[RMDB]
RNA sequence: GGGAACGACUCGAGUAGAGUCGAAAACUUUGAACGUUCGCGUUCAAAGAAACCUCUUAGCAGAUUGGCGAGGACGACGCUGCGGAGCGCGUUUGCCAAUAAAAAGCGUAGGCUUCGGCCUACGCAACACUGUCCUAGUGUUCGCACUAGGACAGUGAAAAGAAACAACAACAACAAC
Reactivity to DMS in 0.01 (KOAc 150mM, MgCl2 10mM, bicine 150mM(pH8.5), 24C), signal-to-noise 3, nucleotides 027 to 126: c000u000u000u010g000a010a010c000g020u000u010c230g050c010g000u000u000c000a000a010a010g000a050a100a150c030c020u010c140u010u010a100g000c160a110g030a050u000u010g000g010c000g010a130g010g000a060c010g010a110c000g030c000u000g020c250g000g000a040g010c020g000c010g000u000u000u010g000c000c000a020a010u010a030a060a080a160a070g020c010g010u000a000g010g000c020u000u000c200g020g000c000c000u000a000c000g010c020a030a060
Reactivity to 2A3 in 0.01 (KOAc 150mM, MgCl2 10mM, bicine 150mM(pH8.5), 24C), signal-to-noise 4, nucleotides 027 to 126: c000u010u000u010g000a000a010c010g010u040u050c250g010c010g050u000u010c030a010a010a010g000a040a010a000c000c030u020c050u160u290a100g030c070a040g050a300u020u040g010g000c020g050a070g130g070a060c020g050a100c000g030c030u160g090c120g200g220a030g010c020g000c000g000u010u000u130g010c000c000a020a010u060a010a040a010a020a000g010c000g000u000a000g010g000c010u020u040c240g050g000c000c000u000a000c010g000c000a000a000